[RMDB]
RNA sequence: GGGAACGACUCGAGUAGAGUCGAAAAGUGGCCGGGACCGCGGGCUGGAACGCCCCCGCGCACCAGGAAUGUCUUGUAGGCGCCCGCCCCCACCGCGCGCCGGACGCGUCCCUGCCCCUUGUACACAAAUAAUUCAAAAAUUCGUUUUUGAAUUAUUAAAAGAAACAACAACAACAAC
Reactivity to 2A3 in 0.01 (KOAc 150mM, MgCl2 10mM, bicine 150mM(pH8.5), 24C), signal-to-noise 5, nucleotides 027 to 126: g010u020g010g000c000c010g010g000g010a020c020c080g000c020g020g030g070c020u040g040g030a070a040c070g040c000c000c000c010c010g000c010g000c020a040c020c000a020g060g080a140a110u190g060u070c020u050u110g060u120a070g040g000c010g020c000c020c010g030c000c010c010c000c000a020c020c030g000c000g000c010g010c010c000g010g010a010c010g000c010g000u010c010c000c000u000g000c000c000c000c000u000u050g090u130a040c080a000c020a050
Reactivity to DMS in 0.01 (KOAc 150mM, MgCl2 10mM, bicine 150mM(pH8.5), 24C), signal-to-noise 6, nucleotides 027 to 126: g010u000g000g010c010c090g000g010g000a020c140c070g010c050g000g000g010c020u010g010g020a100a090c090g000c010c020c010c020c030g000c030g000c060a080c080c050a060g000g010a170a080u020g000u010c040u020u010g010u030a110g010g010c020g000c020c090c080g010c030c010c000c010c020a080c120c070g010c070g010c230g020c010c010g010g010a100c020g010c030g000u000c000c010c000u000g010c000c000c020c010u000u000g010u010a100c090a090c130a080